RNA sequence: GGGAACGACUCGAGUAGAGUCGAAAAAACUCGGCGAAUCGUCCCCACAUAGCAGAACCCAGGACCCCCUUCCAAAGUGACCGAGGGGGGAGCUUGGAACGUGGGGGACCAGUGGAGCCAUGGGAUGGAUAUGACUUCAGUUCGCUGAAGUCAUAUCAAAAGAAACAACAACAACAAC
Reactivity to 2A3 in 0.01 (KOAc 150mM, MgCl2 10mM, bicine 150mM(pH8.5), 24C), signal-to-noise 1, nucleotides 027 to 126: a000a000c050u030c030g040g000c020g010a050a110u050c000g010u030c000c020c030c010a020c010a020u120a020g180c070a040g030a130a070c010c000c010a000g000g040a020c010c000c010c000c000u000u000c010c000a030a150a140g100u110g120a030c000c040g000a020g000g000g010g020g010g000a000g040c000u020u040g020g010a030a010c020g020u070g020g030g020g020g010a030c060c000a060g040u090g060g030a040g000c010c010a020u190g090g040g060a100u100g030
Reactivity to DMS in 0.01 (KOAc 150mM, MgCl2 10mM, bicine 150mM(pH8.5), 24C), signal-to-noise 2, nucleotides 027 to 126: a070a030c040u010c110g020g030c030g020a170a040u010c090g020u010c000c000c030c000a080c040a070u000a110g000c180a090g000a130a120c210c000c020a030g010g020a240c010c000c000c000c000u000u040c010c060a080a090a110g020u000g010a130c150c170g000a040g000g000g010g000g000g000a020g020c020u000u010g000g000a110a030c170g010u010g020g000g000g000g020a000c010c120a080g030u000g020g000a190g000c020c000a030u010g010g010g020a150u010g020